Background:
Structure probing data (DMS and 2A3) for a 207-nucleotide construct. DMS adducts were read by reverse transcription with MarathonRT. For DMS, 4,648 sequencing reads were counted. It was measured as part of the RMDB library M2RFPK.
RNA sequence: GGGAACGACUCGAGUAGAGUCGAAAAGCCCAGAAGCCUCCCCUCUAAAUCGUUUCAGUCCAAAAUUGAUUCGGCGGCCCUGUCAUGAGGCCGAAACGAAGGCACGUACCCCUUCGAAUGGCGUCGGAACUUUCAGUCGUAUUCGUACGACUGAAAACAUGCAAAGUAACUUCGGUUACUUUGCAUGAAAAGAAACAACAACAACAAC
Reactivity to DMS in 0.01 (KOAc 150mM, MgCl2 10mM, bicine 150mM(pH8.5), 24C), signal-to-noise 2, nucleotides 027 to 156: g010c000c000c030a180g000a120a170g020c000c010u000c010c000c000c030u000c050u000a050a090a060u000c030g000u000u010u000c040a060g040u020c050c140a070a030a130a110u000u000g020a070u000u000c050g020g030c040g000g000c020c000c030u010g020u000c150a120u000g010a070g020g060c000c010g010a000a030a100c030g020a030a060g010g030c040a090c130g010u010a140c080c040c000c010u000u020c010g000a090a150u000g000g010c030g000u010c010g010g010a100a070c140u010u000u000c000a010g020u010c000g040u000a040u000u000c270g040u000a020c000g010a030c000u000g000a000a010a050a250
Reactivity to 2A3 in 0.01 (KOAc 150mM, MgCl2 10mM, bicine 150mM(pH8.5), 24C), signal-to-noise 1, nucleotides 027 to 156: g030c020c000c020a110g110a180a050g160c010c010u010c000c010c050c000u000c000u070a050a070a040u040c000g000u000u010u040c020a040g010u030c090c000a040a110a080a130u100u050g020a070u050u080c020g030g070c020g010g000c050c010c010u060g000u040c010a050u030g010a010g040g000c000c000g040a030a000a000c010g000a000a000g040g020c070a010c150g130u160a090c010c020c000c000u000u000c000g060a030a010u030g000g010c010g070u050c090g030g070a080a070c030u000u010u020c010a000g000u010c010g000u000a030u000u080c110g010u000a000c000g000a000c000u000g000a000a000a000a000